An RNA of 207 nucleotides, treated with DMS and 2A3 and read out base by base. Reactivities are given for positions 27 through 156. For 2A3 the reverse transcriptase was SuperScript II with manganese. For DMS, 2,570 sequencing reads were counted.
RNA sequence: GGGAACGACUCGAGUAGAGUCGAAAACGGCCAUCGCGUUGCGAAACAGUGGUUAGGACGCCCGACAGCCUUUCCAUGGGCGUCGCGUCCAAUCCUAUCCAUCCACCCUGAUGAAUAUCAAUGGCAACAAGCUCUCCUUUAUUUUGGGCAAGCCAAGCGUCACAACUAUGUUCGCAUAGUUGUGACGAAAAGAAACAACAACAACAAC
Reactivity to DMS in 0.01 (KOAc 150mM, MgCl2 10mM, bicine 150mM(pH8.5), 24C), signal-to-noise 2, nucleotides 027 to 156: c030g010g020c000c030a030u000c030g020c140g010u010u010g030c000g000a140a090a040c010a120g020u000g020g000u000u040a130g050g010a050c020g000c000c090c000g050a050c020a130g000c000c000u020u000u010c220c190a100u010g020g000g040c020g040u000c050g010c020g000u000c010c030a080a110u000c020c070u000a040u010c040c020a050u000c090c010a130c080c060c060u000g030a070u000g010a060a060u000a120u000c080a040a000u020g000g000c010a170a040c020a120a190g010c040u010c020u050c030c030u000u000u000a170u040u000u030u000g000g020g000c110a090a170g050c040c050a040a120g010
Reactivity to 2A3 in 0.01 (KOAc 150mM, MgCl2 10mM, bicine 150mM(pH8.5), 24C), signal-to-noise 5, nucleotides 027 to 156: c020g030g020c040c010a070u060c050g020c040g060u070u110g050c040g030a040a070a030c070a060g020u050g080g040u020u050a060g000g010a000c010g020c040c090c020g030a000c020a060g010c030c000u060u050u130c080c130a230u280g000g000g000c000g010u000c000g000c000g000u000c000c000a000a010u010c010c010u070a070u040c040c010a020u030c000c020a040c060c010c020u030g030a050u040g030a120a070u110a050u200c130a120a070u090g000g010c000a030a030c040a110a080g010c000u030c000u080c030c020u130u270u080a210u140u170u210u110g030g000g000c040a040a020g030c020c010a010a010g040